An RNA of 177 nucleotides, treated with DMS and 2A3 and read out base by base. The data come from the RNA Mapping Database (RMDB), library RFM100. DMS adducts were read by reverse transcription with MarathonRT. For 2A3 the reverse transcriptase was SuperScript II with manganese. Reactivities are given for positions 27 through 126. Conditions: 150 mM KOAc, 10 mM MgCl2 and 150 mM bicine (pH 8.5), 24 C.
RNA sequence: GGGAACGACUCGAGUAGAGUCGAAAAUCGAACCUUCGGGUUCUCCGGUGUGUGGAUGCGCGUGAACCGAUCUGGUAGUAGCCAAGCGAUGGGGUGACGCAGGAAGGUAGCUGAGCCAGUCAGUGGUCAGAUAAAACCCUUUCGAGGGUUUUAUCUGAAAAGAAACAACAACAACAAC
Reactivity to DMS in 0.01 (KOAc 150mM, MgCl2 10mM, bicine 150mM(pH8.5), 24C), signal-to-noise 2, nucleotides 027 to 126: u050c050g000a030a050c060c010u000u000c120g010g000g000u000u020c000u020c030c020g000g020u020g010u010g000u000g000g000a040u020g000c080g000c020g020u010g000a090a070c120c010g010a060u000c040u020g000g020u010a020g000u080a180g020c040c080a140a040g030c040g050a060u000g000g020g000g010u010g000a100c090g000c050a070g020g000a060a100g000g010u000a090g050c030u020g000a090g020c020c020a120g020u020c050a110g000u010g010g020u000
Reactivity to 2A3 in 0.01 (KOAc 150mM, MgCl2 10mM, bicine 150mM(pH8.5), 24C), signal-to-noise 2, nucleotides 027 to 126: u120c030g020a030a040c000c000u060u070c200g030g000g000u040u000c020u000c010c020g070g000u030g010u030g000u040g050g040a060u040g030c040g000c010g040u040g090a050a050c030c000g020a090u020c040u040g050g000u000a060g030u080a030g060c000c010a050a030g060c020g070a070u100g000g010g040g020u030g010a000c000g000c040a010g020g070a040a030g030g000u030a010g020c020u030g000a020g070c060c040a040g040u060c020a020g040u030g080g050u090